The data come from the RNA Mapping Database (RMDB), library VIROID. Chemical mapping of a 207-nucleotide RNA with 2A3. The 2A3 profile rests on 1,602 reads. 2A3 adducts were read by reverse transcription with SuperScript II with manganese.
RNA sequence: GGGAACGACUCGAGUAGAGUCGAAAAAACGCUCUCCCGACCGCUCGGAUGGGCCGCUUCCGGCAAGAGGGGCCGAAAGUGUGAAGGGAGAGACCGCUCCGAGAGUUGGGAGAAGAAAGAGAGCGAAUGUGUCCGGAGGGAACCCCCAAGCUUUCAAGGUACGUUCUAUGUUCGCAUAGAACGUACCAAAAGAAACAACAACAACAAC
Reactivity to 2A3 in 0.01 (KOAc 150mM, MgCl2 10mM, bicine 150mM(pH8.5), 24C), signal-to-noise 2, nucleotides 027 to 156: a000a000c070g010c020u010c000u000c000c000c000g020a030c010c050g180c120u000c010g050g000a040u060g050g040g000c010c030g030c030u030u000c010c000g010g000c020a090a060g060a030g070g030g080g000c000c000g020a040a050a020g070u100g010u120g140a090a120g060g020g010a090g010a010g010a000c000c000g000c030u000c010c000g020a020g000a000g040u040u050g000g030g000a000g020a040a000g030a000a050a010g100a000g000a000g000c070g030a100a110u070g010u030g010u010c010c000g010g060a050g020g010g000a020a030c010c000c000c000c010a040a020g010c020u030u020u060c070a090a030